Overview: An RNA of 177 nucleotides, treated with 2A3 and DMS and read out base by base.

RNA sequence: GGGAACGACUCGAGUAGAGUCGAAAACCUUUAAGAAAGUUGCAACCAUACCGUAUAAGGUUUGCAACUCUGUUAAGGAUACUCUGGCUUAUUAUGCUCACAGCGUGUUGUACAGAGUUUUUCCUUACAAACGUAUCUUCUUCGGAAGAUACGUUUGAAAAGAAACAACAACAACAAC
Reactivity to 2A3 in 0.01 (KOAc 150mM, MgCl2 10mM, bicine 150mM(pH8.5), 24C), signal-to-noise 2, nucleotides 027 to 126: c010c020u030u080u050a080a030g040a060a140a010g010u000u010g000c000a010a000c000c010a020u100a130c010c080g130u150a120u080a270a060g000g000u040u050u080g000c010a000a000c000u010c010u040g060u080u030a000a000g000g000a000u000a030c000u000c000u000g020g030c020u140u000a040u160u090a030u230g000c010u030c070a070c020a040g000c000g000u040g020u050u070g010u070a150c000a000g020a000g000u040u020u000u060u030c000c000u000u000a010
Reactivity to DMS in 0.01 (KOAc 150mM, MgCl2 10mM, bicine 150mM(pH8.5), 24C), signal-to-noise 4, nucleotides 027 to 126: c010c000u010u000u020a040a030g000a080a070a000g000u000u000g010c010a030a030c060c010a120u000a140c160c290g010u010a300u010a110a050g010g000u000u010u010g000c000a020a010c000u000c050u010g000u010u000a010a020g000g010a090u000a020c000u000c000u010g020g010c020u010u000a060u020u010a020u000g000c010u010c260a150c270a130g000c010g050u000g010u000u000g000u000a070c010a000g000a010g000u000u000u010u000u000c010c000u010u020a130
Conditions: 150 mM KOAc, 10 mM MgCl2 and 150 mM bicine (pH 8.5), 24 C. For 2A3 the reverse transcriptase was SuperScript II with manganese. The DMS profile rests on 2,906 reads.